RNA sequence: GGGAACGACUCGAGUAGAGUCGAAAACACGAGUUAUUUCAAUAGGUAGGCUUGAUUUAAAUAGCGAAGGUUUGUUAUUACUCACUAAUAGCGGUGAUUUAGCUCACCAGUUUGAAAUGCCUGCAAAGAUUAUACUCGAGUUCGCUCGAGUAUAAUCAAAAGAAACAACAACAACAAC
Reactivity to DMS in 0.01 (KOAc 150mM, MgCl2 10mM, bicine 150mM(pH8.5), 24C), signal-to-noise 4, nucleotides 027 to 126: c050a180c110g000a140g010u000u000a020u000u000u000c010a030a050u010a220g010g010u000a020g000g010c000u000u000g010a070u000u000u000a040a040a070u000a080g000c030g010a110a140g000g000u010u000u000g010u000u010a070u000u000a080c100u000c030a030c070u010a050a110u000a270g020c100g010g010u000g000a030u000u010u000a030g000c070u000c020a000c010c000a120g010u000u010u000g010a020a060a040u000g000c050c030u000g010c160a060a080a130
Reactivity to 2A3 in 0.01 (KOAc 150mM, MgCl2 10mM, bicine 150mM(pH8.5), 24C), signal-to-noise 2, nucleotides 027 to 126: c050a020c040g080a060g070u100u120a030u060u050u010c020a030a030u010a090g010g050u000a010g030g000c020u040u040g060a070u100u070u210a100a170a110u140a060g020c020g060a080a030g060g010u040u050u040g010u010u040a070u080u130a060c010u010c010a020c020u080a070a140u060a290g090c060g030g010u020g010a000u010u020u070a010g000c010u000c000a030c000c020a040g030u000u030u030g010a010a020a020u060g020c020c020u030g020c050a050a060a000